[RMDB]
RNA sequence: GGGAACGACUCGAGUAGAGUCGAAAAGCGCAGUGCUGCGCGAGACUCUAGGCCCGUGACAGAGUGGUAUCAGAGCAGACUUGCUGCGCGUUUGGGUGUCCACUCGACUAAACACGCACUCCAGGGAGUAUUCGUUCUUGUUCGCAAGAACGAAUACAAAAGAAACAACAACAACAAC
Reactivity to 2A3 in 0.01 (KOAc 150mM, MgCl2 10mM, bicine 150mM(pH8.5), 24C), signal-to-noise 1, nucleotides 027 to 126: g000c010g000c000a030g110u240g150c080u000g000c110g000c000g000a030g020a010c010u040c020u000a050g000g120c000c020c010g070u010g050a040c070a050g030a030g000u060g030g030u080a080u170c020a040g030a010g180c020a000g080a200c060u130u260g000c000u080g000c020g000c020g020u070u000u090g080g030g000u080g060u070c020c000a010c000u000c000g020a040c040u090a040a040a000c010a020c020g030c020a000c020u070c050c010a040g030g060g010a040
Reactivity to DMS in 0.01 (KOAc 150mM, MgCl2 10mM, bicine 150mM(pH8.5), 24C), signal-to-noise 2, nucleotides 027 to 126: g030c010g000c000a040g010u010g010c100u000g010c000g010c080g030a080g000a110c000u000c030u000a120g040g020c060c020c030g020u010g000a110c110a120g000a020g000u010g020g020u000a090u000c050a070g000a100g010c030a030g010a180c120u020u010g000c060u000g000c010g000c080g000u000u010u020g020g010g010u020g000u000c010c020a030c000u000c030g020a080c050u010a040a100a120c050a060c040g000c030a080c030u000c000c030a070g010g000g000a190
Chemical mapping of a 177-nucleotide RNA with 2A3 and DMS. Source: RMDB library VIROID, as collected in RNAgym. For 2A3, 1,281 sequencing reads were counted. The RNA was probed in 150 mM KOAc, 10 mM MgCl2 and 150 mM bicine (pH 8.5) at 24 C. Reactivities are rounded to 0.1 and cut off at 0 and 3. For 2A3 the reverse transcriptase was SuperScript II with manganese.